[RMDB]
The record gives the reactivity of an RNA of 207 nucleotides to 2A3. The RNA was probed in 150 mM KOAc, 10 mM MgCl2 and 150 mM bicine (pH 8.5) at 24 C.
RNA sequence: GGGAACGACUCGAGUAGAGUCGAAAAAUUGCAGGAAUGUAACCUUCUGGGAUGAUGAUAAUACCCACUGCUUAGAUGAGGCCUUAAUAGAGACCUUUGUAAGGGGACUUGAGGGCAGUGUAGUGCAUCCCCUUCUGAGGCUCAGAAACACAGGAGACCACUGCAUAAUCUUCGGAUUAUGCAGUGGAAAAGAAACAACAACAACAAC
Reactivity to 2A3 in 0.01 (KOAc 150mM, MgCl2 10mM, bicine 150mM(pH8.5), 24C), signal-to-noise 2, nucleotides 027 to 156: a010u180u130g060c080a040g120g090a010a050u110g060u130a050a100c020c040u040u050c040u110g000g000g110a000u090g040a000u000g050a030u090a120a130u190a290c000c000c010a070c070u030g030c000u090u110a020g010a150u080g050a000g050g030c000c010u230u140a150a020u080a110g020a010g020a300c010c000u060u020u030g100u180a030a000g020g000g000g040a010c000u040u110g140a180g000g110g000c030a030g000u070g140u250a170g050u040g110c000a020u020c010c010c000c010u000u000c010u040g010a010g000g020c020u000c020a020g070a030a070a010c140a000c000a050g020g010a040g060a040